[RMDB]
RNA sequence: GGGAACGACUCGAGUAGAGUCGAAAACGAUCAAAGGGAGGAUUUUGGGUCAAGUGGAUGAUGUCUGGGGACUGUCUCUAUCUCUAUUAAUUCAUAUUCUCAAACUCCAUCGCUGAUGCUUUUAAGCCACUGUCACGUGAUUCGUCACGUGACAGUGAAAAGAAACAACAACAACAAC
Reactivity to 2A3 in 0.01 (KOAc 150mM, MgCl2 10mM, bicine 150mM(pH8.5), 24C), signal-to-noise 2, nucleotides 027 to 126: c010g010a070u090c030a090a060a030g080g060g010a030g020g020a020u050u030u040u100g040g020g040u040c060a140a120g010u020g080g000a010u030g000a030u080g080u060c070u060g010g030g050g010a020c040u070g060u040c010u010c010u030a070u020c040u000c030u050a080u120u110a180a040u030u050c040a000u000a130u140u030c000u000c000a060a110a070c000u010c000c000a140u030c050g040c170u040g000a060u060g020c000u060u120u050u160a080a030g000c020
Reactivity to DMS in 0.01 (KOAc 150mM, MgCl2 10mM, bicine 150mM(pH8.5), 24C), signal-to-noise 2, nucleotides 027 to 126: c090g000a080u010c070a050a090a170g020g000g000a060g020g020a060u000u000u010u010g000g000g020u010c110a070a110g000u000g010g000a050u000g010a060u000g010u020c080u000g020g000g010g000a160c150u010g030u000c030u010c050u000a100u000c020u000c040u010a050u010u010a050a080u010u000c040a030u010a150u000u000c010u010c010a020a020a080c060u020c040c020a090u000c030g030c030u000g000a060u000g010c110u010u000u010u000a090a100g020c080

The data come from the RNA Mapping Database (RMDB), library OK2TRN. Chemical mapping of a 177-nucleotide RNA with 2A3 and DMS. The RNA was probed in 150 mM KOAc, 10 mM MgCl2 and 150 mM bicine (pH 8.5) at 24 C. For DMS the reverse transcriptase was MarathonRT.